[RMDB]
Source: RMDB library OK3TST, as collected in RNAgym. Chemical mapping of a 207-nucleotide RNA with DMS and 2A3. Values cover nucleotides 27 to 156. The 2A3 profile rests on 6,776 reads. For DMS the reverse transcriptase was MarathonRT. For 2A3 the reverse transcriptase was SuperScript II with manganese.
RNA sequence: GGGAACGACUCGAGUAGAGUCGAAAAACUCUGCCUCGUUGUAGACGUAGCGAGAACGGCGCCCAAUGCGUCCCAACAGCUCUCUAAGCUUUUCGAUGGAAGGAAUGGUCAGAUCGGAUUCGCACUUGAGGUAGAUGCUGUUAACUGCAGCCUCGCGAGUAACCAUACGAUUCGUCGUAUGGUUACUAAAAGAAACAACAACAACAAC
Reactivity to DMS in 0.01 (KOAc 150mM, MgCl2 10mM, bicine 150mM(pH8.5), 24C), signal-to-noise 3, nucleotides 027 to 156: a040c040u000c010u010g000c010c020u010c000g020u000u000g040u020a070g000a080c050g020u000a120g000c070g000a070g010a090a090c040g020g010c030g010c020c010c080a080a090u010g020c030g010u010c010c010c020a140a080c080a060g000c020u000c040u000c040u010a100a110g020c030u000u000u000u000c040g010a100u010g010g020a090a110g010g010a060a090u010g030g000u000c030a130g000a080u010c040g000g000a120u000u000c070g010c030a110c050u000u000g010a020g000g020u000a070g010a070u000g020c000u010g010u000u010a100a080c100u010g000c010a120g000c040c000u000c020g000c130g000
Reactivity to 2A3 in 0.01 (KOAc 150mM, MgCl2 10mM, bicine 150mM(pH8.5), 24C), signal-to-noise 7, nucleotides 027 to 156: a000c050u040c030u040g020c020c010u030c050g040u040u090g100u120a090g030a120c070g030u050a030g020c010g000a020g020a110a040c050g040g000c010g020c020c040c000a030a050u130g020c010g050u030c030c030c000a030a050c020a030g020c000u010c010u010c040u180a110a070g020c010u050u040u040u070c060g040a060u100g030g070a040a060g050g100a110a110u180g060g050u140c060a030g020a130u020c020g030g000a040u070u060c050g000c060a050c070u060u070g010a020g010g030u070a030g020a080u080g000c010u020g010u100u070a110a090c070u120g000c020a010g000c010c000u020c020g050c020g010